[RMDB]
RNA sequence: GGGAACGACUCGAGUAGAGUCGAAAAUAACGUACUUUCGAGUACGUUAAGUCUCCCGGCGCUAGCAGGGCUGAAGAGAUGAUGGAGGAGCUGGUGGUGGAAUUAGGGGGGGAUUCGUCCCCCCCAAUGUACAUAGCUGCUUCGGCAGCUAUGUACAAAAAGAAACAACAACAACAAC
Reactivity to DMS in 0.01 (KOAc 150mM, MgCl2 10mM, bicine 150mM(pH8.5), 24C), signal-to-noise 1, nucleotides 027 to 126: u000a010a000c020g000u000a000c000u000u000u000c180g010a010g020u000a000c000g010u010u000a010a060g010u000c090u000c010c000c030g030g000c110g000c080u000a060g020c060a080g000g010g000c060u020g020a140a070g000a080g000a060u010g000a060u000g000g000a080g000g010a130g000c080u000g000g020u000g000g020u000g000g010a070a070u000u000a130g000g010g010g010g010g010g000a020u000u000c130g000u000c000c000c000c000c000c000c000a000a010
The record gives the reactivity of an RNA of 177 nucleotides to DMS. The reactions ran in a buffer of 150 mM KOAc, 10 mM MgCl2 and 150 mM bicine (pH 8.5), at 24 C. For DMS the reverse transcriptase was MarathonRT. The DMS profile rests on 1,703 reads.